[RMDB]
RNA sequence: GGGAACGACUCGAGUAGAGUCGAAAAGAAUUGGUAUGUAAGCUACUUCUUCCAGUAGCUGCGUCAUAACAUCAAGGUUAUGCAUGCUGAGCCGAAGCUCAGCUUCGGUCCUCCAAGGAAGACCAAAUACAGCUCAGCCCGUUCGCGGGCUGAGCAACUGAUCAAUUGAGUUCGCUCAAUUGAUCAGAAAAGAAACAACAACAACAAC
Reactivity to 2A3 in 0.01 (KOAc 150mM, MgCl2 10mM, bicine 150mM(pH8.5), 24C), signal-to-noise 2, nucleotides 027 to 156: g040a020a100u030u030g010g000u020a000u010g000u000a000a000g000c000u000a000c000u080u130c000u000u000c010c000a000g000u000a000g000c000u000g000c000g000u010c000a010u010a000a000c000a080u270c210a130a050g300g000u000u000a000u000g000c000a000u010g010c010u010g000a000g000c000c000g000a000a000g010c040u090c300a020g000c000u030u010c000g000g000u000c010c020u040c050c030a050a030g000g000a000a000g000a000c040c060a010a030a020u160a080c070a030g000c010u000c000a000g000c000c010c000g060u100u110c200g030c030g070g030g000c000u000g000a000g000c010a000a010
Reactivity to DMS in 0.01 (KOAc 150mM, MgCl2 10mM, bicine 150mM(pH8.5), 24C), signal-to-noise 1, nucleotides 027 to 156: g010a100a060u000u010g010g000u000a000u000g000u000a300a270g000c000u010a000c000u000u000c030u010u000c070c070a300g010u000a000g110c000u000g000c000g070u000c010a000u000a030a100c010a290u000c240a120a130g040g030u020u000a010u040g010c050a020u000g000c000u030g000a120g040c020c000g000a090a020g020c010u010c050a060g030c000u030u010c020g000g040u000c040c020u000c040c100a160a100g020g020a010a010g050a210c090c050a100a120a060u000a030c090a180g020c010u000c000a030g020c010c020c000g000u000u000c220g000c040g050g040g000c010u000g000a020g040c030a000a030